Annotation:
Conditions: 150 mM KOAc, 10 mM MgCl2 and 150 mM bicine (pH 8.5), 24 C. This 177-nucleotide RNA was probed chemically with DMS and 2A3. For DMS the reverse transcriptase was MarathonRT. Source: RMDB libraries RFM100 and RFMREP, as collected in RNAgym.
RNA sequence: GGGAACGACUCGAGUAGAGUCGAAAAGAAAGAAAGAAAAGUGUGGCACUGAGUGUAUUUGACAAGCUGAGUCCGACACUCAAUGAGACAGAGUGUCAGUUUGUCAAAUACCCCAAGUGAGGCACAACUCCUAUUCCGUGUUCGCACGGAAUAGGAGAAAAGAAACAACAACAACAAC
Reactivity to DMS in 0.01 (KOAc 150mM, MgCl2 10mM, bicine 150mM(pH8.5), 24C), signal-to-noise 2, nucleotides 027 to 126: g050a090a150a050g020a070a180a130g000a100a060a020a120g030u010g010u000g000g000c030a030c020u010g010a190g010u000g000u000a020u000u000u000g030a000c030a000a000g010c010u000g000a040g000u000c050c050g010a080c010a000c000u000c000a040a050u030g030a150g000a130c300a090g030a000g000u000g030u000c000a000g010u000u000u020g020u000c000a000a000a000u000a000c010c020c000c070a090a030g020u000g000a070g010g040c030a010c000a080a090
Reactivity to 2A3 in 0.01 (KOAc 150mM, MgCl2 10mM, bicine 150mM(pH8.5), 24C), signal-to-noise 4, nucleotides 027 to 126: g070a030a060a020g150a050a070a010g080a030a070a050a040g010u020g000u030g150g040c000a000c010u020g020a020g110u050g000u000a000u000u000u000g000a010c000a000a000g000c010u010g020a010g140u090c090c060g030a020c000a000c010u000c000a030a140u230g060a040g040a150c160a070g010a010g000u020g010u000c000a000g000u000u000u000g000u000c000a000a000a000u000a000c010c010c000c000a030a020g010u010g020a040g000g100c020a000c000a000a120